[RMDB]
RNA sequence: GGGAACGACUCGAGUAGAGUCGAAAACAUUUUUCUGAUCAUCUGAAGAUCAGCUAUUAGAAGAGAAAGAUCAGUUAAGUCCUUUGGACCUGAUCAGCUUGAUACAAGAACUACUGAUUUCAACUUCAAAACGGGUGCUACUUCGGUAGCACCCGAACUAAGGGACGUACUUCGGUACGUCCCUUAGAAAAGAAACAACAACAACAAC
Reactivity to 2A3 in 0.01 (KOAc 150mM, MgCl2 10mM, bicine 150mM(pH8.5), 24C), signal-to-noise 1, nucleotides 027 to 156: c000a050u160u100u100u120u120c010u010g010a010u000c000a110u050c110u180g160a090a030g000a070u000c000a000g000c030u220a210u270u010a030g050a030a000g000a040g080a090a050a000g000a050u010c000a000g000u050u210a120a000g010u030c000c010u140u250u290g050g000a040c060c000u040g010a190u080c040a050g040c010u070u160g010a050u050a150c010a020a010g000a130a030c080u120a000c000u140g000a030u000u050u070c040a120a030c040u020u010c000a170a070a150a000c000g000g000g000u000g090c000u000a000c000u030u040c270g030g000u040a000g060c000a000c000c000c040g000a000a000